[RMDB]
RNA sequence: GGGAACGACUCGAGUAGAGUCGAAAAGAAAGGAUUUCUUUGAUGAUUCCAAAAAAGCAUAGUUCAACUGAGCAUCGUAUGCUGAAACUUUUUCCAUCUGAUUUGCACGUCAGUCUGAGAUUUCUCAACAUACACAACGAUUCGUCGUUGUGUAUGUAAAAGAAACAACAACAACAAC
Reactivity to 2A3 in 0.01 (KOAc 150mM, MgCl2 10mM, bicine 150mM(pH8.5), 24C), signal-to-noise 9, nucleotides 027 to 126: g050a020a050a010g080g040a060u060u070u030c050u080u130u150g180a220u150g020a040u060u080c020c000a090a060a000a000a020a010g010c020a020u040a020g020u030u040c050a150a140c220u220g050a040g040c050a030u050c030g150u050a010u020g020c010u030g020a060a060a080c010u040u020u000u050u030c010c020a050u010c020u010g020a040u020u040u190g080c080a030c070g010u010c010a020g030u010c080u050g130a140g030a230u010u040u010c020u000c010a010
Reactivity to DMS in 0.01 (KOAc 150mM, MgCl2 10mM, bicine 150mM(pH8.5), 24C), signal-to-noise 9, nucleotides 027 to 126: g010a080a080a130g000g010a090u020u010u010c010u010u010u020g000a130u020g010a090u010u010c010c020a010a060a060a080a080a040g010c010a020u000a030g010u000u000c050a150a120c200u020g010a070g010c080a060u010c110g020u010a070u000g000c010u000g000a060a050a100c060u000u010u000u000u010c010c020a050u010c020u000g000a040u000u010u010g010c120a060c130g010u000c010a020g010u010c090u000g000a110g000a110u000u000u000c000u000c040a210
The record gives the reactivity of an RNA of 177 nucleotides to 2A3 and DMS. DMS adducts were read by reverse transcription with MarathonRT. 2A3 adducts were read by reverse transcription with SuperScript II with manganese.